This 207-nucleotide RNA was probed chemically with 2A3. 2A3 adducts were read by reverse transcription with SuperScript II with manganese. Values are in units of 0.01, from 0 to 300, in steps of 10. The reactions ran in a buffer of 150 mM KOAc, 10 mM MgCl2 and 150 mM bicine (pH 8.5), at 24 C.
RNA sequence: GGGAACGACUCGAGUAGAGUCGAAAACUCACCAGCCGCAUCUCCGUGAAGCUCUCCGAAAGCGCGAUUCAGAACAUGGGGCCUGCCAUCUUCGGACAGCUCUACACAGACGAAGACUCUCCGGAACUAGUUCUCUCCUCGCUGAUCCUGUAUCAGGCACACGGUCUAGUUUCGACUAGACCGUGUGAAAAGAAACAACAACAACAAC
Reactivity to 2A3 in 0.01 (KOAc 150mM, MgCl2 10mM, bicine 150mM(pH8.5), 24C), signal-to-noise 1, nucleotides 027 to 156: c050u070c040a090c050c070a030g030c030c080g010c070a090u010c030u020c040c020g010u020g020a050a000g000c020u010c000u030c060c000g060a170a110a020g060c040g000c050g050a050u240u000c070a040g070a270a080c070a150u130g020g000g050g000c040c010u030g010c000c000a140u110c090u000u000c080g050g000a030c000a040g000c000u000c020u070a070c070a040c010a050g100a110c010g110a060a010g000a010c000u030c010u000c030c030g030g100a090a070c050u030a080g020u070u000c000u000c000u030c030c010u040c030g060c050u080g030a100u070c030c040u060g040u060a000u100c020a030g030g000